RNA sequence: GGGAACGACUCGAGUAGAGUCGAAAACAGGUGGUAAAGGAGGGCACAGAAGCCAGACAGAGAGAACUGAGUGCCACCAGGACUGAGAUUUGGAGUCUAGGGGAAAAAAGGCCAUGGCUUGUGGGAGAAACAAAAGUCACUUCGGUGACUUUUGUUUAAAAGAAACAACAACAACAAC
Reactivity to DMS in 0.01 (KOAc 150mM, MgCl2 10mM, bicine 150mM(pH8.5), 24C), signal-to-noise 1, nucleotides 027 to 126: c090a130g000g000u010g020g040u010a000a150a070g000g000a090g010g010g010c070a070c040a120g000a140a060g000c020c010a090g000a080c060a110g010a150g030a130g000a100a110c070u000g010a120g010u000g020c000c010a080c040c040a100g000g020a060c050u010g040a080g010a080u020u000u010g030g010a060g020u010c050u010a130g040g000g000g010a000a050a090a070a060a080g010g010c040c060a070u010g000g010c060u000u000g030u000g000g010g010a120g010